[RMDB]
The record gives the reactivity of an RNA of 207 nucleotides to 2A3 and DMS.

RNA sequence: GGGAACGACUCGAGUAGAGUCGAAAAGGGAAUGGUGGUUUACCCCGUUAUCAAAUGAUUACCGAGCAAUAAUUGGCGAAACUCGUUUCGCGUUGGCUGCCUAAUUCAAGGAAUUAGCGUGCCUUCAAAGACAUCAAGAAGUUCGCUUCUUGAUGAAGAUAUGCACUUAGUUCGCUAAGUGCAUAUCAAAAGAAACAACAACAACAAC
Reactivity to 2A3 in 0.01 (KOAc 150mM, MgCl2 10mM, bicine 150mM(pH8.5), 24C), signal-to-noise 5, nucleotides 027 to 156: g030g010g030a070a060u120g030g040u050g040g000u060u070u190a120c020c000c000c010g050u070u070a120u140c060a070a110a090u160g030a030u070u070a050c040c050g040a030g040c060a030a120u170a170a090u150u120g070g000c020g030a030a030a040c070u070c110g070u010u020u010c030g010c020g030u020u030g010g000c040u070g030c020c020u010a010a010u020u010c090a180a080g180g020a090a030u010u000a010g010c030g050u020g000c010c000u000u000c050a090a100a020g070a030c000a000u000c000a000a000g000a000a000g010u020u110c160g030c110u000u000c000u000u000g000a000u010g000a010a000
Reactivity to DMS in 0.01 (KOAc 150mM, MgCl2 10mM, bicine 150mM(pH8.5), 24C), signal-to-noise 4, nucleotides 027 to 156: g010g000g000a050a050u000g010g030u000g010g000u000u000u000a120c010c000c000c000g030u010u000a120u010c070a070a090a100u010g010a160u000u000a090c030c010g000a080g050c070a070a140u010a060a160u010u010g030g030c020g000a140a070a080c050u000c130g020u000u000u000c020g020c050g000u000u000g010g010c020u010g000c090c000u000a010a020u000u000c030a130a190g070g020a070a050u000u000a040g000c040g030u000g010c020c010u000u000c030a090a080a130g000a160c030a010u000c000a010a020g010a030a020g020u010u000c300g020c020u000u000c000u000u010g000a000u000g000a040a080
2A3 adducts were read by reverse transcription with SuperScript II with manganese. For DMS, 10,136 sequencing reads were counted. Reactivities are given for positions 27 through 156.